About this RNA: Structure probing data (DMS and 2A3) for a 177-nucleotide construct. Values are in units of 0.01, from 0 to 300, in steps of 10. DMS adducts were read by reverse transcription with MarathonRT.
RNA sequence: GGGAACGACUCGAGUAGAGUCGAAAAUGACCACGUUCUUCACCAGGCCCUGGACCACCGGCGGCUGGCGCUCGGCGCUGAGGGCCACGCGCGAGGCGGCGGCGGCCACCUGGUUCUUGGCGUCGCACAUCGAUAGUAGCUUCGGCUACUAUCGAUGAAAAGAAACAACAACAACAAC
Reactivity to DMS in 0.01 (KOAc 150mM, MgCl2 10mM, bicine 150mM(pH8.5), 24C), signal-to-noise 2, nucleotides 027 to 126: u000g020a240c010c010a220c070g010u000u020c020u010u000c050a070c030c050a050g000g030c300c060c140u020g030g020a120c010c050a060c040c040g000g010c020g010g000c030u000g010g000c020g020c020u000c120g020g010c030g030c050u010g000a160g010g000g020c010c030a050c150g030c010g020c020g000a090g010g000c000g000g020c010g010g010c020g040g000c000c010a080c080c060u010g010g010u000u000c030u000u000g000g000c010g030u000c080g000c170a180
Reactivity to 2A3 in 0.01 (KOAc 150mM, MgCl2 10mM, bicine 150mM(pH8.5), 24C), signal-to-noise 2, nucleotides 027 to 126: u100g080a020c020c000a050c040g050u120u070c010u080u080c040a040c040c010a020g040g040c040c030c120u150g040g090a300c040c000a030c040c000g050g040c000g060g050c090u030g050g040c050g000c010u030c050g040g020c100g020c110u090g080a180g030g180g000c040c000a020c040g000c000g000c010g090a040g030g060c030g000g050c010g010g000c000g060g030c020c000a010c000c010u000g000g000u050u040c050u050u030g000g010c010g020u010c050g030c020a060
Overview: The RNA was probed in 150 mM KOAc, 10 mM MgCl2 and 150 mM bicine (pH 8.5) at 24 C. For 2A3, 1,618 sequencing reads were counted. The DMS profile rests on 1,795 reads.